[RMDB]
RNA sequence: GGGAACGACUCGAGUAGAGUCGAAAACCAGGUUGCCUAAGGAGGGGUGAACCGGCCCAGGUCGGAAACGGAGCAGGUCAAAACUCCCGUGCUGAUCAGUAGUGGGAUCGCGCCUGUGAAUAGCCACUGCACUCCAGCCUGUGCAACAUAGCGAGACCAAUUUCAAGAGGUUCGCCUCUUGAAAUUGAAAAGAAACAACAACAACAAC
Reactivity to DMS in 0.01 (KOAc 150mM, MgCl2 10mM, bicine 150mM(pH8.5), 24C), signal-to-noise 1, nucleotides 027 to 156: c030c010a140g030g030u010u000g010c020c000u010a170a140g020g020a260g000g020g010g080u030g010a120a060c030c050g030g030c010c020c050a030g000g010u000c010g010g010a100a070a110c080g000g010a260g000c030a060g000g000u000c110a040a050a050a060c040u000c000c000c040g020u000g030c020u000g020a050u000c090a080g060u000a010g000u000g010g020g000a060u020c080g000c140g030c080c000u000g000u010g010a140a160u000a070g020c000c010a210c050u010g010c010a080c010u000c000c000a250g030c050c010u000g020u010g030c040a070a030c040a090u000a070g000c050g010a160g030a090c290
Reactivity to 2A3 in 0.01 (KOAc 150mM, MgCl2 10mM, bicine 150mM(pH8.5), 24C), signal-to-noise 3, nucleotides 027 to 156: c010c010a010g090g000u010u010g000c020c030u120a070a050g030g000a010g020g010g000g000u010g060a070a050c000c020g000g020c010c020c030a110g030g050u040c010g020g030a130a060a070c050g010g000a020g000c040a000g020g030u070c020a000a020a060a160c030u020c000c020c010g010u040g010c030u060g050a230u100c060a030g080u100a030g100u090g030g030g000a000u040c030g020c040g030c070c010u030g020u040g040a110a140u090a090g020c010c010a050c070u120g000c000a000c000u000c000c020a070g030c010c000u090g040u120g010c010a010a000c010a040u150a010g080c150g030a050g040a080c010

Record summary: Source: RMDB library ARCHII, as collected in RNAgym. This 207-nucleotide RNA was probed chemically with DMS and 2A3. For 2A3 the reverse transcriptase was SuperScript II with manganese. 2A3 is a SHAPE reagent: it acylates the 2'-hydroxyl of flexible nucleotides of all four kinds. The reactions ran in a buffer of 150 mM KOAc, 10 mM MgCl2 and 150 mM bicine (pH 8.5), at 24 C. The 2A3 profile rests on 2,077 reads.